RNA sequence: GGGAACGACUCGAGUAGAGUCGAAAAUGGAGGGAGACAGCCACCGGGAUAGGACAGAGAAAUCACCUCCAGAGGACCCCUUCAGCGAACAUGAAGCGCACUGAGCCGCCAGGAUGAGUCCAUAGCGAAGCCGAGCUGUUCGCAGCUCGGAAAAGAAACAACAACAACAAC
Reactivity to 2A3 in 0.01 (KOAc 150mM, MgCl2 10mM, bicine 150mM(pH8.5), 24C), signal-to-noise 5, nucleotides 027 to 129: u060g010g010a020g010g000g000a090g010a030c020a030g040c020c010a020c020c020g050g020g030a060u120a090g030g030a030c080a060g080a010g050a080a080a040u120c040a060c010c000u020c010c010a000g010a030g010g070a070c010c000c000c000u050u020c010a030g000c000g020a010a000c000a040u090g010a040a000g030c020g000c090a010c040u030g010a010g040c030c020g030c010c020a010g010g020a030u040g010a010g060u000c010c020a040u060a030g070c050g050a050a010g040
Reactivity to DMS in 0.01 (KOAc 150mM, MgCl2 10mM, bicine 150mM(pH8.5), 24C), signal-to-noise 6, nucleotides 027 to 129: u040g000g000a080g010g030g010a080g030a080c090a170g020c090c090a060c020c000g000g000g000a090u000a000g060g020a080c090a070g030a110g040a060a120a140u030c010a110c030c020u020c030c030a000g010a150g000g000a120c120c040c040c100u020u040c020a100g050c100g020a040a030c070a070u030g010a000a010g050c270g000c140a050c070u040g020a080g020c070c060g000c040c070a060g000g000a040u040g000a070g020u010c010c050a050u040a070g000c050g020a040a070g020